[RMDB]
RNA sequence: GGGAACGACUCGAGUAGAGUCGAAAAGGUGUUCUUGAUGUAUAGGAAUGCUACUGAUUUUUGUACAUUGAUUUUAUAUCAUGAAAAUUUCUAAAGUUGUUUAUCAGAUCAAGCAGCUUGUGGGCAGUGACUAAUGCGCAUUCGUGCGCAUUAGUCAAAAAGAAACAACAACAACAAC
Reactivity to DMS in 0.01 (KOAc 150mM, MgCl2 10mM, bicine 150mM(pH8.5), 24C), signal-to-noise 1, nucleotides 027 to 126: g050g020u010g040u020u040c100u000u000g000a000u010g110u000a000u010a030g000g000a020a010u000g000c240u020a010c040u040g000a050u000u000u080u000u000g010u050a010c010a070u010u000g020a100u040u000u000u000a060u140a000u000c010a020u000g010a000a140a210a300u000u000u020c000u000a100a000a060g010u000u000g000u000u000u000a070u000c250a140g000a190u000c060a060a050g000c000a020g000c000u000u030g000u000g000g050g000c250a070g000
The record gives the reactivity of an RNA of 177 nucleotides to DMS. For DMS the reverse transcriptase was MarathonRT.